[RMDB]
RNA sequence: GGGAACGACUCGAGUAGAGUCGAAAAGGCAUUAAGCGCCAGCAACGUUAUGUGGCAGAAGCCAUUACUGAAGAGUGGCGUAUGGCACCCGGUCCGCUUGAAGUGGCCUGGUUUGCGGAAGAGACGGUACCAUUAUGGUAUUCGUACCAUAAUGGUAAAAAGAAACAACAACAACAAC
Reactivity to 2A3 in 0.01 (KOAc 150mM, MgCl2 10mM, bicine 150mM(pH8.5), 24C), signal-to-noise 9, nucleotides 027 to 126: g060g000c030a030u090u160a110a080g020c010g000c030c010a020g050c030a030a050c030g040u120u110a100u250g030u020g040g000c020a030g070a260a010g020c000c010a020u040u090a080c070u110g100a130a070g050a080g130u020g010g000c010g010u060a090u070g050g010c010a020c000c010c000g010g030u080c030c010g040c050u050u140g080a130a030g030u050g060g010c000c010u020g030g010u040u090u110g020c030g030g030a060a020g040a020g010a050c050g030g020
Reactivity to DMS in 0.01 (KOAc 150mM, MgCl2 10mM, bicine 150mM(pH8.5), 24C), signal-to-noise 9, nucleotides 027 to 126: g010g020c020a070u020u020a090a130g010c040g010c020c020a080g010c080a070a150c120g010u010u010a050u030g030u000g000g010c010a110g020a130a180g010c000c010a010u000u010a050c100u020g010a140a150g000a080g010u000g000g000c010g010u010a090u010g010g000c030a080c100c040c040g010g000u010c020c020g010c030u010u010g010a080a080g030u010g000g000c030c010u010g010g010u000u010u010g010c110g000g000a080a120g000a100g000a070c070g000g010

Structure probing data (2A3 and DMS) for a 177-nucleotide construct. The RNA was probed in 150 mM KOAc, 10 mM MgCl2 and 150 mM bicine (pH 8.5) at 24 C.